Structure probing data (2A3) for a 207-nucleotide construct. For 2A3 the reverse transcriptase was SuperScript II with manganese.

[RMDB]
RNA sequence: GGGAACGACUCGAGUAGAGUCGAAAAGGGGUCCAUCUAGUACUCCUAUGAAGCUCCUGACAUGACCUGAAGCCUCCACGGGUCAACAGCAGGAGUGGAGGAGGACCGAUGGACGGAGGCACCCAAAGCAAAUACGGGCUUCGGCCCGUAUUUGCAAGAAGGAGUCAUUGUUCGCAAUGACUCCUUCAAAAGAAACAACAACAACAAC
Reactivity to 2A3 in 0.01 (KOAc 150mM, MgCl2 10mM, bicine 150mM(pH8.5), 24C), signal-to-noise 1, nucleotides 027 to 156: g060g010g030g020u000c020c000a000u000c000u020a010g040u000a020c000u010c020c000u260a300u080g000a000a000g010c000u000c000c000u010g040a030c050a280u200g010a010c000c000u010g050a110a000g010c010c000u000c000c000a030c010g010g000g020u010c010a060a030c040a070g280c000a000g010g000a000g000u020g020g010a000g010g000a000g000g000a000c000c030g020a000u000g000g000a000c040g000g000a000g000g000c000a030c000c000c000a080a050a000g000c000a020a000a000u000a000c020g000g020g000c030u090u160c280g070g000c020c020c000g000u000a010u000u000u000g000c000a000a010
As a SHAPE reagent, 2A3 marks flexible, mostly unpaired nucleotides at the ribose 2'-OH. The 2A3 profile rests on 1,105 reads. Source: RMDB library RNAMAK, as collected in RNAgym.